[RMDB]
RNA sequence: GGGAACGACUCGAGUAGAGUCGAAAAGAUAUGGAAAUGUGUAGGGAGCUAGUACAUCGGAAACGAUGUAUAGCAUCGAUCUACCAUUUCCUAAGUCAAAAGUGUGCGAUGUUCGCAUCGCACACAAUCUGAUACAACAGUUCGCUGUUGUAUCAGAAAAAGAAACAACAACAACAAC
Reactivity to 2A3 in 0.01 (KOAc 150mM, MgCl2 10mM, bicine 150mM(pH8.5), 24C), signal-to-noise 5, nucleotides 027 to 126: g010a010u030a010u070g000g050a030a010a020u030g240u020g010u030a010g030g090g110a220g040c010u010a030g290u030a040c000a000u000c000g010g000a020a010a000c010g010a010u000g010u000a000u000a000g000c010a050u300c160g080a200u020c000u000a010c000c000a000u010u000u010c000c000u000a020a000g020u000c030a010a030a120a230g000u000g000u010g010c000g000a000u020g030u060u070c230g020c190a000u000c000g000c010a000c000a000c000a010a010
Reactivity to DMS in 0.01 (KOAc 150mM, MgCl2 10mM, bicine 150mM(pH8.5), 24C), signal-to-noise 5, nucleotides 027 to 126: g010a020u000a180u010g000g000a020a000a010u000g000u010g020u010a020g020g000g010a140g030c000u010a020g070u010a010c010a010u000c010g010g000a050a030a090c000g010a010u000g010u000a010u000a010g010c010a300u000c270g010a090u000c000u000a010c000c010a020u000u000u000c000c000u000a000a060g010u010c020a080a100a110a140g000u000g020u000g010c000g010a010u000g010u000u020c280g010c010a010u000c000g000c000a010c000a000c010a030a040
Chemical mapping of a 177-nucleotide RNA with 2A3 and DMS.
It was measured as part of the RMDB library TTRDES.
The RNA was probed in 150 mM KOAc, 10 mM MgCl2 and 150 mM bicine (pH 8.5) at 24 C.